[RMDB]
RNA sequence: GGGAACGACUCGAGUAGAGUCGAAAAUAGUUUUCCAGGCCAGGCAAAAGAUUAAGACACAUUUUUGAUCUUCCAUGUGGGAUUAGGCCUGCAUUAGCUCUAUUUGUUAAGGGACUUGAUUUCAUUGUGGAUCCACUUGCUGAGUUAGGAAUAAAUACCCUUUUAUUUAUUUCGAUAAAUAAAAGGGAAAAGAAACAACAACAACAAC
Reactivity to 2A3 in 0.01 (KOAc 150mM, MgCl2 10mM, bicine 150mM(pH8.5), 24C), signal-to-noise 2, nucleotides 027 to 156: u060a000g030u040u070u040u000c020c020a020g040g000c010c010a010g060g000c020a060a100a060a030g020a020u100u130a060a010g080a020c020a010c040a230u050u090u040u140u160g010a030u000c010u020u010c020c010a000u060g000u000g040g100g010a010u050u100a020g010g000c000c010u000g040c040a080u050u030a010g010c010u000c030u140a190u180u210u110g020u050u070a030a040g000g020g070a110c000u040u010g030a010u030u040u100c030a030u110u160g000u030g020g000a040u030c040c020a060c060u060u050g000c040u020g010a030g060u020u090a040g040g030a050a010u090a090a070a010u120a140
Reactivity to DMS in 0.01 (KOAc 150mM, MgCl2 10mM, bicine 150mM(pH8.5), 24C), signal-to-noise 2, nucleotides 027 to 156: u000a100g010u000u010u000u010c020c000a170g010g000c030c030a160g020g020c060a080a060a070a080g000a040u010u000a050a060g000a090c140a110c090a090u000u020u000u020u000g010a030u020c020u000u000c020c020a070u000g030u000g010g030g000a050u010u000a040g010g000c000c010u000g040c040a110u000u000a060g000c010u000c070u000a120u000u000u010g020u000u000a020a060g030g030g010a040c010u000u010g010a030u000u010u010c010a080u000u020g050u000g010g000a100u000c030c070a050c090u000u000g020c020u010g010a140g010u010u000a090g000g000a050a060u000a020a030a070u010a290